Source: RMDB library TTRDEL, as collected in RNAgym. An RNA of 177 nucleotides, treated with DMS and read out base by base. The RNA was probed in 150 mM KOAc, 10 mM MgCl2 and 150 mM bicine (pH 8.5) at 24 C.
RNA sequence: GGGAACGACUCGAGUAGAGUCGAAAAGAUAUGGAGUUAGGAGGUAUCGGUCGCAGAUAUCGGAAACGAUGUAGACCGUACUACCCACCCUAACUCCUAAGUCAAAAGGUUUCCUUCGGGAAACCAACAACGGUAAUUCCUUCGGGAAUUACCGUUGAAAAGAAACAACAACAACAAC
Reactivity to DMS in 0.01 (KOAc 150mM, MgCl2 10mM, bicine 150mM(pH8.5), 24C), signal-to-noise 1, nucleotides 027 to 126: g000a050u010a300u000g010g000a000g000u000u010a000g020g000a060g020g000u000a010u010c000g000g010u000c000g000c130a100g020a060u010a000u010c000g000g000a100a090a250c000g040a040u020g020u000a070g000a030c010c000g010u020a040c300u000a000c000c000c030a190c270c010c000u000a010a010c000u000c000c000u000a000a080g000u010c050a050a060a080a130g000g000u000u000u000c000c010u000u010c250g000g000g000a000a000a040c000c000a030a090